[RMDB]
RNA sequence: GGGAACGACUCGAGUAGAGUCGAAAACAAGAGGCUGGAAACCCAGAUCUUGGAGAGAGAACACUCGAGAGCUUCACUCGCCUUCUAGAAGAUCCUACCACCUUAAAUAUCAGAGGAGGGGCCAGUCCACCCCACGGGGGUUCGCCCCCGUGGGGUGAAAAGAAACAACAACAACAAC
Reactivity to 2A3 in 0.01 (KOAc 150mM, MgCl2 10mM, bicine 150mM(pH8.5), 24C), signal-to-noise 1, nucleotides 027 to 126: c010a020a060g030a000g190g100c010u000g020g000a030a190a190c040c020c000a010g010a010u000c000u050u050g020g000a100g000a000g050a000g000a150a000c020a090c060u130c050g040a070g010a030g190c000u090u100c030a040c080u010c030g010c010c010u010u070c010u050a030g000a110a080g000a120u010c010c010u020a020c020c050a020c010c000u060u000a170a090a030u190a100u090c090a010g020a000g070g010a010g020g010g000g000c000c000a010g010u000c000
Source: RMDB library OK1LIB, as collected in RNAgym. The record gives the reactivity of an RNA of 177 nucleotides to 2A3.